Chemical mapping of a 207-nucleotide RNA with 2A3 and DMS. Values cover nucleotides 27 to 156. The RNA was probed in 150 mM KOAc, 10 mM MgCl2 and 150 mM bicine (pH 8.5) at 24 C. High DMS reactivity at an A or C suggests that its Watson-Crick edge is free.
RNA sequence: GGGAACGACUCGAGUAGAGUCGAAAAUUAGAACCAACAACUAUUGACGGGAGGGAGAUAACAAAGGACUUCAUUAUGCAAUAUGCUCCAACUUUGAAAGGAAAGCCAGUUAAUAUAGACCACAAUUAUUUCAAUGCUUCAAAUACAGCAGUUGGAGGCAUAGAAUAGACUUCGGUCUAUUCUAUGCAAAAGAAACAACAACAACAAC
Reactivity to 2A3 in 0.01 (KOAc 150mM, MgCl2 10mM, bicine 150mM(pH8.5), 24C), signal-to-noise 4, nucleotides 027 to 156: u180u100a030g040a100a030c040c010a030a030c020a030a040c030u140a070u170u160g040a020c030g030g000g010a030g010g030g010a030g030a040u080a100a020c060a100a070a060g030g040a030c010u090u060c090a070u050u220a030u160g050c030a030a070u050a040u270g020c000u020c050c000a020a030c030u150u110u130g100a120a070a020g030g000a090a000a010g000c020c020a020g020u040u030a090a020u080a020u040a050g040a040c020c030a040c090a120a100u090u050a090u030u170u100c060a070a050u110g000c000u020u020c010a010a110a080u200a160c060a010g060c010a010g030u020u010g000g010a000g000
Reactivity to DMS in 0.01 (KOAc 150mM, MgCl2 10mM, bicine 150mM(pH8.5), 24C), signal-to-noise 2, nucleotides 027 to 156: u000u000a120g020a110a300c040c020a100a170c080a100a120c050u010a130u000u010g030a120c150g010g010g030a050g040g020g020a100g000a160u000a060a090c110a060a090a120g000g000a060c050u010u020c020a080u000u000a120u000g030c090a060a160u010a080u010g000c030u000c000c010a010a080c020u000u020u010g050a060a060a090g000g020a080a130a050g020c010c010a140g000u000u000a090a080u000a110u000a100g020a030c020c080a020c040a070a090u000u020a080u010u000u010c050a030a070u010g000c000u010u000c070a010a100a060u000a140c120a050g000c010a040g090u000u000g000g030a070g020